This 177-nucleotide RNA was probed chemically with DMS and 2A3. High 2A3 reactivity points to a flexible backbone, as in loops and unpaired stretches.
[RMDB]
RNA sequence: GGGAACGACUCGAGUAGAGUCGAAAACACUGACCCCGAACGUCGAGAGACGCCCCGGGUCAGGACAGCUCUUCCCGGCUUAAGGGUUGAGCCCAGGUGGCUUCCGGCUUACCGGACACGUCGUGUGGUAUCCCCAUUGAUUCGUCAAUGGGGAUACAAAAGAAACAACAACAACAAC
Reactivity to DMS in 0.01 (KOAc 150mM, MgCl2 10mM, bicine 150mM(pH8.5), 24C), signal-to-noise 5, nucleotides 027 to 126: c140a220c010u000g000a020c000c000c010c140g000a200a170c000g000u000c010g010a230g000a300g000a030c000g000c040c020c230c300g000g000g010u020c000a000g010g000a090c230a090g000c030u000c010u010u010c010c010c020g000g000c150u020u000a100a140g010g000g010u000u000g000a030g020c000c000c030a050g000g020u010g000g010c070u020u000c040c030g000g000c160u010u010a040c020c010g000g010a050c150a060c060g010u000c070g010u030g010u000g010
Reactivity to 2A3 in 0.01 (KOAc 150mM, MgCl2 10mM, bicine 150mM(pH8.5), 24C), signal-to-noise 6, nucleotides 027 to 126: c080a010c010u020g010a010c010c010c000c030g040a040a020c000g000u000c000g010a020g010a010g010a150c000g030c030c020c020c000g020g000g000u000c010a000g000g010a010c040a020g000c010u010c000u020u010c010c000c000g020g030c080u120u210a100a100g020g010g000u010u010g020a010g000c000c010c000a090g020g040u050g050g000c040u090u050c030c010g020g000c040u050u110a200c010c010g010g020a030c030a010c070g100u090c020g030u070g050u080g200
Source information
DMS adducts were read by reverse transcription with MarathonRT.